[RMDB]
This 207-nucleotide RNA was probed chemically with 2A3 and DMS. Values cover nucleotides 27 to 156. For 2A3 the reverse transcriptase was SuperScript II with manganese. It was measured as part of the RMDB library OK3TST. Conditions: 150 mM KOAc, 10 mM MgCl2 and 150 mM bicine (pH 8.5), 24 C. For DMS, 1,685 sequencing reads were counted.

RNA sequence: GGGAACGACUCGAGUAGAGUCGAAAAAAAUCGAUCGAACCUUGCUUUACCUUUUGAUCAAAGUGUAAAUCCAGUUUCGUUUAGCAUGAUCUCAUCGCAUGAUGUCAUGCUAAAGUUGGAUGAUGAAAUAUUUUACAAAAGUCUGAAUCAAUCGAACAUGUCUGCCAUAAUUCGUUAUGGCAGACAUAAAAGAAACAACAACAACAAC
Reactivity to 2A3 in 0.01 (KOAc 150mM, MgCl2 10mM, bicine 150mM(pH8.5), 24C), signal-to-noise 2, nucleotides 027 to 156: a000a000a000u070c030g020a020u030c010g000a000a010c000c000u020u010g010c000u050u020u050a040c000c000u050u030u030u160g180a110u080c010a050a020a000g170u190g000u080a000a020a000u030c000c010a000g000u000u000u000c030g000u000u040u070a000g000c000a000u000g010a010u010c030u030c010a030u080c030g090c300a080u170g010a000u010g020u040c010a000u000g000c000u000a000a000a000g040u040u060g010g020a040u010g020a020u030g010a000a020a000u130a060u110u220u090u020a100c110a030a150a000a000g030u000c050u110g100a070a060u050c070a040a030u020c030g000a010a030c010
Reactivity to DMS in 0.01 (KOAc 150mM, MgCl2 10mM, bicine 150mM(pH8.5), 24C), signal-to-noise 2, nucleotides 027 to 156: a040a000a040u000c000g060a100u000c020g000a030a110c040c000u020u000g020c010u000u010u000a070c060c010u000u010u000u020g000a050u000c100a100a040a090g000u050g020u000a060a010a060u000c000c050a080g000u000u000u000c080g010u000u000u010a030g010c020a050u000g000a040u000c300u000c000a050u020c250g000c050a300u000g050a010u000g020u000c000a020u000g000c000u000a000a000a030g030u010u000g000g000a010u000g010a050u000g000a020a060a050u010a060u000u010u000u000a270c060a020a110a060a140g010u000c020u000g030a140a100u020c050a030a060u000c030g020a040a130c100